[RMDB]
This 207-nucleotide RNA was probed chemically with DMS and 2A3.
RNA sequence: GGGAACGACUCGAGUAGAGUCGAAAACAAACACAACACGAAUAACGCCAUAUCUUUGUUUGAUUACAAUUGGUUUUUGAAAGGAGCAUUGAGACAAACGCUUUACAGUUUUGGGGACACACGACACAUCCUAAAAAUUGACGAUACGUAUUCGUACGUCUGAAUUGGGAUUCGUCCCAAUUCAGACAAAAGAAACAACAACAACAAC
Reactivity to DMS in 0.01 (KOAc 150mM, MgCl2 10mM, bicine 150mM(pH8.5), 24C), signal-to-noise 2, nucleotides 027 to 156: c030a080a060a090c090a140c040a060a130c090a050c040g000a200a120u010a080a090c020g000c030c040a140u020a060u000c020u010u000u000g020u000u000u020g000a110u000u000a060c080a110a190u000u000g000g030u010u000u000u020u000g010a040a110a060g020g000a050g030c010a070u000u010g010a150g010a100c040a110a090a020c080g000c040u000u000u020a080c070a060g000u000u000u000u000g030g030g050g000a080c050a020c060a120c030g020a110c120a030c110a020u030c000c030u010a010a020a040a060a070u000u010g010a090c060g000a100u010a060c020g000u000a140u000u010c010g030u000a110c060
Reactivity to 2A3 in 0.01 (KOAc 150mM, MgCl2 10mM, bicine 150mM(pH8.5), 24C), signal-to-noise 6, nucleotides 027 to 156: c010a010a060a020c040a010c030a140a090c040a020c070g070a090a040u160a200a040c040g030c060c040a050u040a060u160c100u100u070u100g080u070u050u090g120a160u110u170a050c060a090a090u090u050g070g070u050u040u050u080u170g140a140a090a040g050g010a020g030c030a030u020u120g030a030g020a060c030a030a070a010c040g000c030u080u060u120a050c020a040g010u020u030u040u060g000g000g020g010a010c010a000c000a000c060g100a000c010a000c020a080u030c030c030u100a040a060a030a030a050u060u090g030a010c020g040a050u010a080c020g040u040a110u080u090c020g010u030a050c040